Source: RMDB library OK2TRN, as collected in RNAgym. The record gives the reactivity of an RNA of 177 nucleotides to DMS and 2A3. Values are in units of 0.01, from 0 to 300, in steps of 10. For DMS, 573 sequencing reads were counted. The 2A3 profile rests on 573 reads. 2A3 adducts were read by reverse transcription with SuperScript II with manganese.
RNA sequence: GGGAACGACUCGAGUAGAGUCGAAAAGACAAUCACAGCUUAAUUCGAUACGAUCUGAGCAUGAUCUUGGAUGAUCCUCUUUUAGAAAACCUUCAAAGUUCUCUAGUACGAAAGGAUUCUAAAGAAGGUGGACACUGGAAUUCGUUCCAGUGUCCACAAAAGAAACAACAACAACAAC
Reactivity to DMS in 0.01 (KOAc 150mM, MgCl2 10mM, bicine 150mM(pH8.5), 24C), signal-to-noise 1, nucleotides 027 to 126: g000a190c130a040a040u000c030a030c080a130g010c010u000u000a140a090u000u010c090g030a120u010a120c140g000a010u000c110u000g010a020g020c020a250u040g020a050u000c070u010u000g020g020a150u000g000a090u000c010c000u000c030u000u000u030u000a020g000a040a000a050a050c000c000u010u000c090a110a170a100g000u020u000c110u000c190u040a120g000u020a050c170g000a090a020a020g020g000a300u000u010c010u000a000a030a030g000a040a030g000
Reactivity to 2A3 in 0.01 (KOAc 150mM, MgCl2 10mM, bicine 150mM(pH8.5), 24C), signal-to-noise 1, nucleotides 027 to 126: g000a000c070a000a000u040c020a000c070a110g000c040u080u090a030a030u220u060c030g120a150u070a300c110g020a050u070c110u100g000a000g040c000a070u070g010a040u030c020u050u200g000g030a030u030g010a030u040c020c040u160c000u050u070u000u040a030g000a000a120a110a120c010c000u030u020c110a300a190a050g000u060u030c080u000c040u090a110g140u130a020c050g040a080a020a020g000g000a040u080u000c000u000a060a100a030g100a020a000g000